[RMDB]
RNA sequence: GGGAACGACUCGAGUAGAGUCGAAAACUUGUCAAUUCUGCCGGAUUGGCCGACAGUGAGAAAUCAUCGUGUUAGUCGAAGUGGUCUGGAACGGCCUGUCGUAGAGGGUGAGAGUCCCGUAGACGAAGUGUACAUGGCCAUUCGUGGCCAUGUACACAAAAGAAACAACAACAACAAC
Reactivity to DMS in 0.01 (KOAc 150mM, MgCl2 10mM, bicine 150mM(pH8.5), 24C), signal-to-noise 2, nucleotides 027 to 126: c050u000u000g000u000c030a050a140u000u000c030u020g000c080c140g010g000a190u020u000g030g030c040c110g000a090c050a050g010u010g000a060g020a130a070a130u000c020a050u000c120g070u000g000u000u010a110g010u010c030g040a050a110g000u000g000g020u010c000u000g000g010a250a110c050g000g000c000c030u000g010u020c020g020u000a030g010a210g040g000g020u010g000a090g000a150g020u000c000c000c020g000u010a180g010a060c150g020a080a150
Reactivity to 2A3 in 0.01 (KOAc 150mM, MgCl2 10mM, bicine 150mM(pH8.5), 24C), signal-to-noise 2, nucleotides 027 to 126: c000u110u110g040u120c050a030a050u040u000c080u230g070c060c040g040g000a030u050u050g020g050c000c000g130a180c000a060g010u000g110a110g070a000a230a000u140c120a120u020c080g050u100g030u160u100a140g000u050c000g000a030a000g060u070g060g010u000c070u050g020g000a030a000c000g010g000c000c000u000g110u000c000g000u000a000g000a070g190g040g010u040g000a010g000a000g130u000c000c000c030g000u000a060g000a050c000g000a140a040
Description:
Conditions: 150 mM KOAc, 10 mM MgCl2 and 150 mM bicine (pH 8.5), 24 C. The record gives the reactivity of an RNA of 177 nucleotides to DMS and 2A3. DMS (dimethyl sulfate) methylates the pairing face of unpaired adenines and cytosines. It was measured as part of the RMDB libraries RFM100 and RFMREP. For 2A3, 603 sequencing reads were counted.